Structure probing data (DMS and 2A3) for a 177-nucleotide construct. The reactions ran in a buffer of 150 mM KOAc, 10 mM MgCl2 and 150 mM bicine (pH 8.5), at 24 C.
[RMDB]
RNA sequence: GGGAACGACUCGAGUAGAGUCGAAAAGGAUGCGUGAUGUGCAGGGACCAAUACUGCGCGACGCGAUGAAAAUUAUCGGCGAAAUCGAUCUGCGCUUAAUGCUGGCGCAGGCGCUGCAUAUGGGCGACUCGAUGAGAUAAUUCGUUAUCUCAUCGAGAAAAGAAACAACAACAACAAC
Reactivity to DMS in 0.01 (KOAc 150mM, MgCl2 10mM, bicine 150mM(pH8.5), 24C), signal-to-noise 7, nucleotides 027 to 126: g020g000a080u010g000c020g020u010g010a080u010g040u000g010c020a020g010g000g010a160c140c160a110a130u010a090c020u000g010c010g010c010g010a040c020g010c010g020a060u000g000a070a070a070a060u010u010a050u000c020g010g020c060g010a070a120a090u000c050g010a070u000c010u000g010c000g010c000u000u010a080a080u020g030c190u000g000g010c010g020c010a020g010g000c010g010c060u010g000c070a060u000a070u000g000g010g000c090g010a190
Reactivity to 2A3 in 0.01 (KOAc 150mM, MgCl2 10mM, bicine 150mM(pH8.5), 24C), signal-to-noise 7, nucleotides 027 to 126: g120g030a080u220g020c010g010u080g040a210u140g060u010g010c010a000g030g010g050a030c030c040a050a060u180a180c010u020g000c010g000c020g010a020c020g020c030g010a060u110g070a010a090a060a080u210u090a070u100c010g030g000c060g060a030a040a080u110c040g020a080u000c020u020g000c030g000c020u090u100a170a050u300g100c180u100g010g000c000g000c000a010g010g000c020g000c010u050g000c020a030u060a080u190g030g050g030c030g050a060
For DMS the reverse transcriptase was MarathonRT. For 2A3 the reverse transcriptase was SuperScript II with manganese. Reactivities are rounded to 0.1 and cut off at 0 and 3.